[RMDB]
Structure probing data (DMS and 2A3) for a 177-nucleotide construct. Reactivities are given for positions 27 through 126. For DMS the reverse transcriptase was MarathonRT. The data come from the RNA Mapping Database (RMDB), library OK2TRN. High DMS reactivity at an A or C suggests that its Watson-Crick edge is free. The RNA was probed in 150 mM KOAc, 10 mM MgCl2 and 150 mM bicine (pH 8.5) at 24 C. 2A3 adducts were read by reverse transcription with SuperScript II with manganese.
RNA sequence: GGGAACGACUCGAGUAGAGUCGAAAAACGCAUAAUAUAUCGCAUAAUAUAUGCGAUACGCGCGGCGUAUUAUCGCGCGAUAGCGUAUUAUCGCAUAGCGAUACGCUAUGCGCGCAUAUAUAUAGCGAGUAGAGAUCAUAUUCGUAUGAUCUCUACUAAAAGAAACAACAACAACAAC
Reactivity to DMS in 0.01 (KOAc 150mM, MgCl2 10mM, bicine 150mM(pH8.5), 24C), signal-to-noise 9, nucleotides 027 to 126: a120c040g010c090a100u010a090a100u010a130u000a090u010c000g010c000a030u000a090a100u010a100u000a020u000g010c000g010a040u000a010c060g020c030g030c070g010g000c040g010u000a070u000u010a050u000c110g010c010g010c010g010a020u000a030g010c040g010u000a030u000u010a090u000c020g010c030a110u000a080g010c020g010a100u000a040c060g010c000u000a010u000g010c010g010c030g010c040a010u000a010u000a020u000a030u000a070g010c020g010
Reactivity to 2A3 in 0.01 (KOAc 150mM, MgCl2 10mM, bicine 150mM(pH8.5), 24C), signal-to-noise 9, nucleotides 027 to 126: a000c090g010c050a130u140a230a090u170a130u030a030u110c000g000c010a010u050a300a090u110a130u030a010u070g000c000g000a010u020a020c010g020c000g000c030g080g000c010g000u020a100u150u090a060u170c060g000c010g000c000g080a050u050a020g000c020g010u030a070u100u140a110u090c030g000c110a120u130a060g010c010g140a120u060a200c050g000c000u010a010u070g060c010g000c010g000c000a010u020a000u000a000u000a000u060a040g010c010g010